Description:
Structure probing data (2A3 and DMS) for a 177-nucleotide construct. For DMS, 13,938 sequencing reads were counted. For DMS the reverse transcriptase was MarathonRT. The RNA was probed in 150 mM KOAc, 10 mM MgCl2 and 150 mM bicine (pH 8.5) at 24 C.
RNA sequence: GGGAACGACUCGAGUAGAGUCGAAAAAAAUGCACGCGCUGCUUGCGUAGGAUGUCGAGCGUGCGGUCGAUCUCGGCGUCGCCGAUCGUCGUCGUCGAGCGCUCGACUUCAGCCGUCGCCAGAUCGAGGGUAAAUUUUAUUUCGAUAAAAUUUACCCAAAAGAAACAACAACAACAAC
Reactivity to 2A3 in 0.01 (KOAc 150mM, MgCl2 10mM, bicine 150mM(pH8.5), 24C), signal-to-noise 3, nucleotides 027 to 126: a000a000a020u140g000c030a020c050g040c010g030c030u060g010c000u050u120g000c030g040u020a080g060g090a040u090g010u030c010g010a010g010c010g010u060g010c020g020g010u060c000g000a040u020c010u020c010g000g020c050g210u150c150g000c040c030g020a100u060c050g020u010c010g000u010c000g020u020c040g040a030g020c010g030c030u000c010g010a010c000u010u010c010a010g020c000c000g040u040c030g040c030c000a030g040a110u150c030g050a100
Reactivity to DMS in 0.01 (KOAc 150mM, MgCl2 10mM, bicine 150mM(pH8.5), 24C), signal-to-noise 6, nucleotides 027 to 126: a060a050a060u010g000c040a080c050g010c070g010c040u000g010c100u000u000g010c040g020u000a090g000g010a040u000g010u000c020g010a020g010c000g010u000g010c020g020g010u000c010g010a020u000c120u000c020g020g000c010g020u010c150g020c030c020g000a030u010c240g000u000c020g010u000c020g000u010c080g000a140g010c020g010c020u000c010g000a010c000u000u000c030a060g010c040c030g010u000c050g010c050c070a090g000a070u000c060g000a240